Structure probing data (2A3) for a 177-nucleotide construct. Reactivities are given for positions 27 through 126.

RNA sequence: GGGAACGACUCGAGUAGAGUCGAAAACAAAAACAAUGGUUAGGGCUGAUGCAUCCGUCAGCAUCAAGGUGCUCCUAAAUGCCACCGUUGCACACUUUGGUUUUAGGCCGACGUAACAAAAACAAAAGCGAGAUCAUCAGUUCGCUGAUGAUCUCGCAAAAGAAACAACAACAACAAC
Reactivity to 2A3 in 0.01 (KOAc 150mM, MgCl2 10mM, bicine 150mM(pH8.5), 24C), signal-to-noise 1, nucleotides 027 to 126: c010a000a090a000a000a000c070a050a000u210g030g000u120u070a040g000g030g000c000u070g000a070u000g020c000a020u080c000c130g000u020c010a000g000c000a000u110c000a040a020g200g010u070g010c000u170c060c000u030a210a080a020u180g020c040c000a000c000c000g000u000u000g130c050a040c000a000c080u030u090u210g000g060u090u120u160u210a020g070g000c030c020g030a160c000g000u050a000a000c070a140a000a040a000a000c040a050a000a110a000

The data come from the RNA Mapping Database (RMDB), library OK1LIB. Conditions: 150 mM KOAc, 10 mM MgCl2 and 150 mM bicine (pH 8.5), 24 C.